[RMDB]
RNA sequence: GGGAACGACUCGAGUAGAGUCGAAAACCACUGCAUGUUCUUGUACUCGAUGAGGUGGAAUACGUUCGCGCCGCCGCACGCGGAGCGCUUGCAUCCCUAGCCGAACUAUCGGCUGAGUACGCCUCACAAUUAUGACUGCAUUCGUGCAGUCAUAAUUAAAAGAAACAACAACAACAAC
Reactivity to DMS in 0.01 (KOAc 150mM, MgCl2 10mM, bicine 150mM(pH8.5), 24C), signal-to-noise 5, nucleotides 027 to 126: c000c000a140c170u020g000c140a030u000g010u000u000c140u000u000g030u000a100c060u000c050g020a150u010g000a030g000g020u000g000g000a120a070u010a130c110g010u020u010c030g030c010g000c000c050g010c030c150g000c120a170c180g000c000g000g000a130g010c010g000c160u000u010g030c070a040u010c010c030c020u020a040g000c010c000g000a030a180c300u040a060u010c000g000g000c000u000g010a040g010u030a110c100g010c010c000u000c020a080c170
Reactivity to 2A3 in 0.01 (KOAc 150mM, MgCl2 10mM, bicine 150mM(pH8.5), 24C), signal-to-noise 5, nucleotides 027 to 126: c020c000a030c040u080g040c060a090u110g040u060u030c020u040u080g040u060a120c020u020c090g110a140u050g040a030g050g000u020g010g020a060a070u130a140c090g030u040u060c040g010c000g000c070c050g090c020c010g100c040a040c110g010c010g010g040a020g030c010g000c000u020u040g070c020a070u060c000c020c000u010a020g000c020c000g080a150a150c080u170a300u240c000g000g000c000u000g010a000g020u030a010c010g000c010c000u050c010a020c020